[RMDB]
RNA sequence: GGGAACGACUCGAGUAGAGUCGAAAAAGCCGCCGGCCGAUCCGGACAUCGUGGGUUGGGAGGUCGACGAGUUCGUGUCACUGGCGCGGUCGGGUGCCUACCUGGGCGGGGACCGGCGGGUGUCGCCCGCACCCGGAACAUUCGUGUUCCGGGUGCGAAAAGAAACAACAACAACAAC
Reactivity to 2A3 in 0.01 (KOAc 150mM, MgCl2 10mM, bicine 150mM(pH8.5), 24C), signal-to-noise 3, nucleotides 027 to 126: a010g050c030c040g000c000c030g000g000c030c060g020a080u040c020c010g070g020a030c040a130u080c050g120u080g030g080g030u170u100g100g020g010a100g030g160u120c010g030a060c010g020a030g070u130u050c030g030u020g020u040c080a090c300u190g040g010c070g020c010g060g020u000c000g000g020g120u080g030c010c020u090a140c000c040u110g020g040g040c050g040g000g020g000a050c000c000g010g000c060g000g010g000u030g010u000c110g060c000c030